[RMDB]
RNA sequence: GGGAACGACUCGAGUAGAGUCGAAAAGAAAGAAAUGGCUAAGGUGUUGGCUCGGGCUCCCCACUGCAGUUACCCUCCCCUCGGCGUUACUGAGCACUGGGGGCUUUCGGGCUCUGCGUCUGCACAAGGAACCUUAAGUAUUCGUACUUAAGGUUCCAAAAGAAACAACAACAACAAC
Reactivity to DMS in 0.01 (KOAc 150mM, MgCl2 10mM, bicine 150mM(pH8.5), 24C), signal-to-noise 4, nucleotides 027 to 126: g000a100a080a110g000a060a100a060u020g000g020c070u010a080a050g010g000u000g010u010u000g000g000c010u000c020g020g000g010c020u010c020c000c010c070a050c080u020g000c030a050g010u000u010a060c090c010c020u000c060c000c000c020u000c080g000g000c200g010u010u010a030c050u000g010a090g020c060a040c130u010g000g010g000g000g020c060u000u010u010c020g000g000g000c020u000c050u020g000c040g010u000c020u000g000c030a090c130a110a160
Reactivity to 2A3 in 0.01 (KOAc 150mM, MgCl2 10mM, bicine 150mM(pH8.5), 24C), signal-to-noise 4, nucleotides 027 to 126: g120a010a080a020g130a030a090a030u170g060g010c070u130a040a070g020g030u030g040u060u090g030g010c000u010c010g010g010g000c030u150c020c010c010c000a020c020u050g010c000a010g010u010u040a020c010c000c010u090c010c030c000c000u050c030g030g000c060g010u020u040a030c050u050g060a040g040c040a010c140u080g020g000g010g010g010c000u060u050u080c010g020g000g000c000u000c010u040g000c010g020u000c030u060g020c030a030c030a130a050